[RMDB]
RNA sequence: GGGAACGACUCGAGUAGAGUCGAAAAGGUUUAAUCGGGUCUACACCUCUCCCUACCGAUUAAACCAGCGAAAGCGACAACAAGGAGAGGAUAGGAGUGCAUGCGUCAUAACCUCCCCAUAGCAUGCACUCCAGCGAGAGCGAACAACUGGGGAGGAACCUGAUAGGAGUUUCGACUCCUAUCAGGUAAAAGAAACAACAACAACAAC
Reactivity to 2A3 in 0.01 (KOAc 150mM, MgCl2 10mM, bicine 150mM(pH8.5), 24C), signal-to-noise 2, nucleotides 027 to 156: g010g000u000u000u000a000a010u000c010g000g000g060u030c110u160a080c100a100c060c000u000c000u000c000c010c010u000a100c000c010g000a000u000u000a000a000a000c000c000a000g030c030g030a130a010a010g070c030g070a050c050a100a020c040a100a030g000g000a020g000a000g000g000a010u110a040g000g000a000g000u010g010c000a000u020g000c010g060u130c130a170u100a270a170c000c010u000c000c010c000c000a030u030a020g000c000a000u000g000c010a000c000u000c000c000a000g010c020g010a080g000a000g020c010g000a030a030c010a040a120c120u030g000g000g010g000a000g000g000a000